[RMDB]
RNA sequence: GGGAACGACUCGAGUAGAGUCGAAAAUGAAAGAGUUUCCAUUAACCUAUGGAGUAAUAGCGAUCAAGAAUACAACCUCCCAUCUUGGUUGACUUAAUUAUUCCAUAGGAUGGUGGAAGCUAAAAAAACUAAUAAUCAGUUUCGACUGAUUAUUAGUAAAAGAAACAACAACAACAAC
Reactivity to 2A3 in 0.01 (KOAc 150mM, MgCl2 10mM, bicine 150mM(pH8.5), 24C), signal-to-noise 2, nucleotides 027 to 126: u170g050a040a060a070g140a010g030u000u000u000c010c020a000u000u010a040a070c000c000u000a010u000g000g010a000g010u000a010a020u010a040g010c000g000a000u010c000a010a000g030a130a040u250a300c160a240a270c160c040u070c030c010c000a020u010c000u000u010g010g000u000u010g070a100c010u000u030a030a010u000u000a010u010u000c010c000a000u000a000g000g000a000u010g010g000u020g000g000a000a010g000c010u040a100a030a030a050a000a000
Reactivity to DMS in 0.01 (KOAc 150mM, MgCl2 10mM, bicine 150mM(pH8.5), 24C), signal-to-noise 3, nucleotides 027 to 126: u010g000a140a100a120g000a020g000u000u000u000c000c000a020u010u000a050a070c010c000u010a000u000g010g010a020g020u000a000a010u000a010g000c010g010a000u000c000a010a000g000a050a070u000a100c160a070a300c100c040u000c010c010c030a180u000c000u010u000g000g010u000u000g000a090c020u000u010a020a030u000u000a000u000u000c000c000a020u000a000g010g000a010u010g000g010u000g000g000a020a000g000c000u010a000a010a090a070a030a040